[RMDB]
RNA sequence: GGGAACGACUCGAGUAGAGUCGAAAAAUGAUGUUCAGGGAGAACAGUUCCUGUAGGUCUGAACAAGAUGGGUCUCUGGAAAGUCAUUUAAUGCCAGACAGCAGCAUCCUUUCAUAAGCAUACCUGCACUAAUGUGUCCAGCAGCCCCCUGUAGCAAUCGCUUUUAUCAUUUCGAUGAUAAAAGCGAAAAAGAAACAACAACAACAAC
Reactivity to 2A3 in 0.01 (KOAc 150mM, MgCl2 10mM, bicine 150mM(pH8.5), 24C), signal-to-noise 2, nucleotides 027 to 156: a000u120g040a060u080g030u050u090c010a050g030g030g000a150g020a080a060c020a060g030u080u040c000c010u020g040u060a030g010g120u000c020u040g050a050a010c060a040a030g080a030u080g030g040g000u000c040u050c000u060g000g050a130a080a030g050u020c020a010u040u150u270a170a030u180g020c050c000a020g000a070c010a010g050c020a010g050c000a060u090c020c000u020u210u120c090a070u090a150a000g000c000a010u040a130c000c040u060g000c010a010c060u030a060a050u080g030u040g010u050c020c040a020g030c020a010g020c050c000c000c000c030u050g020u060a010g050c040a060a090
Reactivity to DMS in 0.01 (KOAc 150mM, MgCl2 10mM, bicine 150mM(pH8.5), 24C), signal-to-noise 1, nucleotides 027 to 156: a030u000g000a020u010g000u000u000c010a110g000g020g020a190g020a060a090c010a120g030u000u000c040c010u010g020u010a130g010g040u030c040u000g000a010a060c030a040a050g020a060u010g020g030g020u000c020u010c010u010g060g000a050a110a140g000u000c090a050u010u000u000a110a080u000g020c050c060a070g000a090c040a060g010c090a060g010c080a050u030c040c020u000u040u010c040a080u000a060a130g040c070a080u010a000c100c020u000g000c070a060c020u000a040a040u010g050u000g020u000c000c000a100g040c030a120g000c010c010c000c030c060u010g030u000a090g010c090a140a190
Conditions: 150 mM KOAc, 10 mM MgCl2 and 150 mM bicine (pH 8.5), 24 C.
An RNA of 207 nucleotides, treated with 2A3 and DMS and read out base by base.
It was measured as part of the RMDB library OK3TST.